[RMDB]
Background:
Chemical mapping of a 177-nucleotide RNA with 2A3 and DMS. The reactions ran in a buffer of 150 mM KOAc, 10 mM MgCl2 and 150 mM bicine (pH 8.5), at 24 C. The data come from the RNA Mapping Database (RMDB), library OK1LIB. The DMS profile rests on 9,290 reads.
RNA sequence: GGGAACGACUCGAGUAGAGUCGAAAAGAAGCAUGCGAAAUGGUUGACCGUCCGUGGGGAGUCAUUAUUAGGCUCGGACGACGUUUUUUUUUCGUCAAGAAAGAAGGGAAGCCGGAAAGCAUGCGAACCCAUAUGAAAUCUUCGGAUUUCAUAUGGGAAAAGAAACAACAACAACAAC
Reactivity to 2A3 in 0.01 (KOAc 150mM, MgCl2 10mM, bicine 150mM(pH8.5), 24C), signal-to-noise 9, nucleotides 027 to 126: g130a060a020g000c000a000u010g000c020g100a070a020a050u070g020g030u100u040g100a050c010c020g020u030c020c030g040u190g030g120g060g010a020g010u010c020a040u010u300a080u160u260a130g000g000c000u000c030g010g010a020c020g000a000c010g010u010u010u000u000u010u000u020u080u050c030g010u020c010a040a050g050a080a070a010g120a040a070g020g000g020a010a000g000c000c010g000g040a140a030a000g000c000a000u000g000c000g000a000a010
Reactivity to DMS in 0.01 (KOAc 150mM, MgCl2 10mM, bicine 150mM(pH8.5), 24C), signal-to-noise 5, nucleotides 027 to 126: g020a160a200g000c030a010u000g000c000g000a070a050a280u060g000g010u000u000g020a270c090c010g010u000c070c040g020u050g030g030g010g000a020g010u000c020a070u020u040a140u030u040a110g010g000c000u000c000g010g020a040c040g020a040c120g010u020u010u000u010u010u020u000u000u010c030g010u040c240a070a110g010a030a020a010g000a040a010g000g000g010a080a050g000c000c010g000g000a300a030a110g000c010a000u000g000c000g010a060a110